RNA sequence: GGGAACGACUCGAGUAGAGUCGAAAAGCAAGAUGCUUCGGCAUCUUGCAGUGGUAGCGCGAUCGACAGAAUUACAGCUAUGUCGAACGAGGAAGAGCGCGCACAUCAUCCCUUUCGAGGGAUGAAAUGCUCCAAGAAAUUUCGAUUUCUUGGAGCAAAAAGAAACAACAACAACAAC
Reactivity to DMS in 0.01 (KOAc 150mM, MgCl2 10mM, bicine 150mM(pH8.5), 24C), signal-to-noise 3, nucleotides 027 to 126: g000c000a000a000g010a010u000g010c000u000u020c220g030g000c000a000u000c010u000u000g020c010a020g000u020g010g040u000a040g020c020g010c020g030a140u010c000g000a000c020a000g000a120a160u000u020a150c300a100g000c110u000a100u000g010u000c010g000a020a120c160g010a100g000g000a130a060g000a130g000c000g000c020g000c010a060c120a200u000c020a010u000c000c000c000u000u010u000c130g020a020g010g010g000a010u000g000a010a060a080
Reactivity to 2A3 in 0.01 (KOAc 150mM, MgCl2 10mM, bicine 150mM(pH8.5), 24C), signal-to-noise 2, nucleotides 027 to 126: g000c000a000a010g010a000u010g020c020u090u180c260g100g000c000a000u000c020u010u000g010c000a000g050u060g130g060u080a030g000c000g000c010g050a040u020c000g010a000c000a010g090a070a020u190u120a180c030a080g030c110u100a050u110g000u000c010g010a040a050c090g050a100g090g100a060a100g020a030g060c000g000c000g050c020a000c010a030u040c000a000u000c000c000c000u000u030u040c180g040a010g000g000g000a000u000g000a030a000a020
An RNA of 177 nucleotides, treated with DMS and 2A3 and read out base by base. 2A3 adducts were read by reverse transcription with SuperScript II with manganese. 2A3 is a SHAPE reagent: it acylates the 2'-hydroxyl of flexible nucleotides of all four kinds. The reactions ran in a buffer of 150 mM KOAc, 10 mM MgCl2 and 150 mM bicine (pH 8.5), at 24 C. Source: RMDB library M2PK50, as collected in RNAgym. The DMS profile rests on 2,783 reads.